[RMDB]
RNA sequence: GGGAACGACUCGAGUAGAGUCGAAAAGCUCGGCCUUUCGAGGCCGAGCAGACGCCGUUUGCCUAGGCUAUAGGCUAAAUUAAAACACAAGCUGAAACACAACUGCUGAACAUUUCGAUGUUCAGAAAACCAAGUACUAAUUCGUUAGUACUUGGUUAAAAGAAACAACAACAACAAC
Reactivity to 2A3 in 0.01 (KOAc 150mM, MgCl2 10mM, bicine 150mM(pH8.5), 24C), signal-to-noise 5, nucleotides 027 to 126: g010c000u000c000g010g000c000c010u110u060u110c240g080a020g000g010c010c030g010a000g000c010a000g000a000c070g020c000c000g020u000u040u030g010c000c000u010a020g060g000c120u140a060u020a090g010g010c000u010a030a080a100u150u180a020a040a060a010c110a030c060a110a030g040c050u080g090a090a110a010c050a020c010a110a120c080u120g000c000u000g020a000a000c010a020u050u070u110c160g110a020u000g010u010u000c000a010g020a040a050
Reactivity to DMS in 0.01 (KOAc 150mM, MgCl2 10mM, bicine 150mM(pH8.5), 24C), signal-to-noise 6, nucleotides 027 to 126: g020c000u000c010g020g000c000c000u000u010u010c140g010a020g020g030c000c000g010a010g020c000a020g000a120c130g020c010c010g000u010u000u000g010c000c000u000a020g000g000c040u020a090u000a020g000g000c010u000a020a080a090u010u010a070a060a070a080c140a070c140a070a060g010c070u010g000a080a060a080c090a070c120a040a060c090u010g010c000u000g000a010a010c000a010u000u000u020c150g010a020u000g000u000u000c000a000g000a060a040

This 177-nucleotide RNA was probed chemically with 2A3 and DMS. The reactions ran in a buffer of 150 mM KOAc, 10 mM MgCl2 and 150 mM bicine (pH 8.5), at 24 C. It was measured as part of the RMDB library M2PK50. For DMS the reverse transcriptase was MarathonRT.